[RMDB]
Conditions: 150 mM KOAc, 10 mM MgCl2 and 150 mM bicine (pH 8.5), 24 C.
Chemical mapping of a 177-nucleotide RNA with DMS and 2A3.
Reactivities are given for positions 27 through 126.
RNA sequence: GGGAACGACUCGAGUAGAGUCGAAAACUUGACUCCAAAUUACAUUAACUGCGCAUGUCCGCUUUGUCCUCUGGCUCGCUGUCUAACUCUGUUACCAAUAUUUUGGGGAUCGAGAUUCAAAGUCACGCGUAAGAACCGGUUUCGACCGGUUCUUACGAAAAGAAACAACAACAACAAC
Reactivity to DMS in 0.01 (KOAc 150mM, MgCl2 10mM, bicine 150mM(pH8.5), 24C), signal-to-noise 1, nucleotides 027 to 126: c070u000u000g010a140c000u000c010c040a100a050a050u010u010a080c160a080u020u010a070a110c070u000g010c060g000c070a100u000g030u000c040c040g020c030u020u010u010g000u000c010c070u010c040u010g010g010c050u000c070g000c060u000g020u010c020u000a080a100c040u000c070u000g000u000u000a070c090c040a040a070u000a120u020u000u000u010g010g010g000g000a130u000c060g020a040g000a110u000u000c080a140a080a110g000u020c050a090c180g010
Reactivity to 2A3 in 0.01 (KOAc 150mM, MgCl2 10mM, bicine 150mM(pH8.5), 24C), signal-to-noise 1, nucleotides 027 to 126: c000u020u070g050a000c030u050c000c020a070a110a160u110u090a090c030a070u120u120a090a100c060u050g010c000g000c090a090u010g060u070c030c010g010c090u100u080u110g020u000c010c050u070c040u030g060g000c040u000c000g010c020u010g030u030c060u050a040a040c020u060c020u060g000u010u050a040c000c000a050a030u150a170u220u160u000u010g030g000g000g000a010u050c030g040a000g010a070u040u240c140a030a090a090g040u040c010a010c130g020